[RMDB]
RNA sequence: GGGAACGACUCGAGUAGAGUCGAAAACGCUCUUCGGAGCGCUGAUAGGGGUCGGUCACGAAGAACUUGUCAGAUACACACUGAAGCCUCCACGGUGUAGUAUCUUGGAUUUAGGGAGUGACCGACGGAGGCACCCGGGGAAUUCGUUCGCGAAUAAUUGAAUUUGUAGAUUCGUCUACAAAUUCAAAAAAGAAACAACAACAACAAC
Reactivity to DMS in 0.01 (KOAc 150mM, MgCl2 10mM, bicine 150mM(pH8.5), 24C), signal-to-noise 1, nucleotides 027 to 156: c010g010c020u000c000u000u020c300g030g000a050g000c010g030c010u000g020a220u000a050g030g000g040g070u000c010g000g010u000c000a020c030g010a120a300g000a100a140c040u000u030g000u020c030a050g020a020u000a020c030a030c040a000c000u020g020a050a120g040c020c000u000c000c020a300c070g040g040u000g000u000a080g060u000a020u040c020u000u010g030g030a120u000u010u020a180g040g000g000a260g000u000g000a030c050c020g020a020c000g000g000a080g050g070c020a060c000c010c010g000g000g030g060a100a180u000u020c000g000u000u000c080g000c040g010a060a040u000a040a150
Reactivity to 2A3 in 0.01 (KOAc 150mM, MgCl2 10mM, bicine 150mM(pH8.5), 24C), signal-to-noise 2, nucleotides 027 to 156: c000g000c000u000c000u070u100c210g080g010a000g000c000g000c060u080g040a100u150a160g100g010g070g000u010c000g000g000u010c010a020c050g130a100a150g060a190a080c080u110u240g140u250c020a020g000a010u000a000c000a000c010a000c000u000g030a050a000g000c010c000u030c020c000a030c020g020g000u000g000u020a200g000u010a000u020c020u070u130g100g040a170u180u160u190a100g010g040g000a090g000u000g000a000c010c000g000a000c000g000g000a000g000g000c000a000c010c000c020g040g020g010g030a030a090u110u070c030g070u100u140c140g030c110g220a030a030u300a100a090